The data come from the RNA Mapping Database (RMDB), library OK1LIB.
An RNA of 177 nucleotides, treated with 2A3 and DMS and read out base by base.
The reactions ran in a buffer of 150 mM KOAc, 10 mM MgCl2 and 150 mM bicine (pH 8.5), at 24 C.
For 2A3, 7,644 sequencing reads were counted.

RNA sequence: GGGAACGACUCGAGUAGAGUCGAAAAGGAGAUCGAAGACGACCGACGUCAGCACGGUCAGGAUGUAGGUCCGCAUGCAUCCAAGUUGACGAAACUUUACGAUUUCCAAAGCGGACAAGAAGUCAAAAUCCUGGUAAUCAUUCGUGAUUACCAGGAUAAAAGAAACAACAACAACAAC
Reactivity to 2A3 in 0.01 (KOAc 150mM, MgCl2 10mM, bicine 150mM(pH8.5), 24C), signal-to-noise 7, nucleotides 027 to 126: g010g010a010g000a010u020c020g040a100a040g120a110c110g010a010c020c010g060a090c040g190u260c150a020g080c180a030c000g030g000u020c010a010g000g010a000u000g000u000a000g000g020u000c000c000g010c000a000u010g000c000a000u000c000c000a010a010g010u010u040g070a130c140g070a050a010a000c000u020u020u050a030c020g000a000u010u010u020c000c010a050a070a020g000c000g000g000a000c000a000a050g130a060a010g080u190c170a070a060a010
Reactivity to DMS in 0.01 (KOAc 150mM, MgCl2 10mM, bicine 150mM(pH8.5), 24C), signal-to-noise 4, nucleotides 027 to 126: g000g000a050g010a010u020c020g010a170a140g020a120c110g010a040c040c040g020a100c070g030u060c120a140g020c110a130c000g000g000u000c010a160g000g000a010u010g010u000a010g000g000u000c000c030g000c000a060u000g010c000a000u000c000c010a060a020g000u010u000g000a190c170g010a170a030a060c010u000u000u030a140c050g000a010u000u000u000c000c000a050a120a120g010c000g000g000a000c010a150a100g000a090a090g010u010c080a050a120a060